[RMDB]
RNA sequence: GGGAACGACUCGAGUAGAGUCGAAAAUAAGUCUAGUUCGCUAGACUUACUAUCGGGAAAACAGCCUCCGGGCUCGAUCAGGCGGAUUCCGUCCAAGCGCUGCAACACACGUAUUCGUACGUGUGAACGCUAGAACAUGCUUCGGCAUGUUCUAGCGAAAAGAAACAACAACAACAAC
Reactivity to DMS in 0.01 (KOAc 150mM, MgCl2 10mM, bicine 150mM(pH8.5), 24C), signal-to-noise 1, nucleotides 027 to 126: u000a020a000g010u000c010u000a000g000u000u010c190g040c010u000a010g000a050c010u000u000a000c090u000a070u000c050g020g000g000a040a060a040a140c140a070g000c010c010u000c030c050g030g000g010c030u010c050g000a070u010c140a070g010g020c020g000g020a110u000u000c060c040g080u000c020c060a100a020g000c120g000c070u010g000c130a150a130c020a010c000a000c010g010u000a000u000u000c240g000u000a000c000g010u000g000u000g000a050a070
Reactivity to 2A3 in 0.01 (KOAc 150mM, MgCl2 10mM, bicine 150mM(pH8.5), 24C), signal-to-noise 1, nucleotides 027 to 126: u050a010a000g000u020c000u000a010g010u000u020c150g050c070u000a000g010a000c020u000u000a000c000u030a050u090c020g030g000g040a030a090a030a070c030a020g060c010c010u000c020c030g030g050g000c010u010c060g020a030u090c050a040g060g000c040g050g050a220u180u050c030c030g000u040c030c000a040a020g090c040g030c100u100g050c030a160a010c000a020c000a010c010g000u010a030u060u080c240g000u020a000c010g000u020g000u010g030a020a010

This 177-nucleotide RNA was probed chemically with DMS and 2A3. For 2A3, 1,726 sequencing reads were counted. Reactivities are given for positions 27 through 126. For DMS, 937 sequencing reads were counted. The reactions ran in a buffer of 150 mM KOAc, 10 mM MgCl2 and 150 mM bicine (pH 8.5), at 24 C.